[RMDB]
RNA sequence: GGGAACGACUCGAGUAGAGUCGAAAAGUGCGGACUGAAAUUCAUAGGAGCCUCGCCAUUAUGGCUGAACGCCGCGGUAUUCCGCGUAGUCGCGACGUAAACGUUCUGUGUUCGCGUUCAGGCCUCACAGUAGUGCUGCAUUCGUGCAGCACUACUGAAAAGAAACAACAACAACAAC
Reactivity to 2A3 in 0.01 (KOAc 150mM, MgCl2 10mM, bicine 150mM(pH8.5), 24C), signal-to-noise 2, nucleotides 027 to 126: g020u020g010c000g020g030a030c010u010g040a080a160a090u160u090c050a040u170a170g090g000a000g040c000c020u040c000g000c020c000a120u190u120a090u180g010g030c040u030g010a020a000c010g010c050c000g000c020g040g020u100a170u150u130c020c050g000c030g020u090a060g030u030c020g000c040g040a020c020g000u080a150a140a040c030g040u110u000c050u060g060u010g070u160u100c060g010c050g010u030u000c000a030g050g090c030c010u040c000a120
Reactivity to DMS in 0.01 (KOAc 150mM, MgCl2 10mM, bicine 150mM(pH8.5), 24C), signal-to-noise 2, nucleotides 027 to 126: g020u000g000c100g020g000a060c030u000g000a060a060a130u010u010c100a100u010a100g010g020a080g020c050c060u000c070g010c000c020a190u020u010a080u030g010g000c010u000g000a060a030c040g010c030c000g000c000g040g000u000a220u000u010c060c010g000c070g010u000a100g010u010c020g040c030g010a010c040g010u000a050a110a130c120g000u010u000c000u010g000u000g000u000u000c100g000c080g000u000u010c030a020g000g040c010c010u000c100a140

The record gives the reactivity of an RNA of 177 nucleotides to 2A3 and DMS. It was measured as part of the RMDB library OK2TRN. Reactivities are given for positions 27 through 126. DMS adducts were read by reverse transcription with MarathonRT. For 2A3, 1,271 sequencing reads were counted.